[RMDB]
RNA sequence: GGGAACGACUCGAGUAGAGUCGAAAAUCCUAAGUCGACGGCCCAACGAAGAACACGGAUUGUCAGCCAUAUCGGAAACGAUAUGGCUUGGAUUUAUCCGUGGGAGUUGGGUUUCGUCGAUAUGGAAAACUCCGUCGUCGUUCGCGACGACGGAGAAGUGUUACUAAUUGUUCGCAAUUAGUAACACAAAAGAAACAACAACAACAAC
Reactivity to 2A3 in 0.01 (KOAc 150mM, MgCl2 10mM, bicine 150mM(pH8.5), 24C), signal-to-noise 1, nucleotides 027 to 156: u050c010c000u060a300a060g040u010c010g000a010c000g020g000c000c000c050a010a010c000g190a300a050g010a050a010c000a000c020g010g020a000u000u010g010u020c000a010g000c000c000a000u000a000u000c010g000g070a130a020a040c000g000a000u010a010u010g000g040c000u000u040g020g000a000u140u100u130a010u000c000c010g000u010g010g000g000a020g010u000u000g000g000g010u000u020u010c000g000u010c000g000a000u010a030u050g020g050a040a070a040a040c000u000c000c000g000u000c000g000u000c020g020u040u130c220g010c010g100a000c010g000a000c050g000g000a000g000a000a010
Reactivity to DMS in 0.01 (KOAc 150mM, MgCl2 10mM, bicine 150mM(pH8.5), 24C), signal-to-noise 1, nucleotides 027 to 156: u000c000c000u010a090a220g010u000c000g010a050c020g000g020c000c000c000a000a050c010g010a140a180g010a150a220c000a020c000g020g020a020u000u010g000u000c000a110g000c000c000a010u000a000u000c020g010g010a240a100a300c020g030a020u000a000u000g020g000c000u010u020g000g010a010u000u000u000a000u000c020c000g030u000g010g020g000a120g010u000u000g000g010g010u000u000u000c020g040u000c000g000a020u000a100u010g000g000a050a060a130a170c000u000c020c030g000u000c000g020u000c000g000u000u000c260g020c010g030a010c000g000a010c000g010g010a000g000a000a020

This 207-nucleotide RNA was probed chemically with 2A3 and DMS. For 2A3, 2,159 sequencing reads were counted. 2A3 adducts were read by reverse transcription with SuperScript II with manganese. The data come from the RNA Mapping Database (RMDB), library RNAMAK.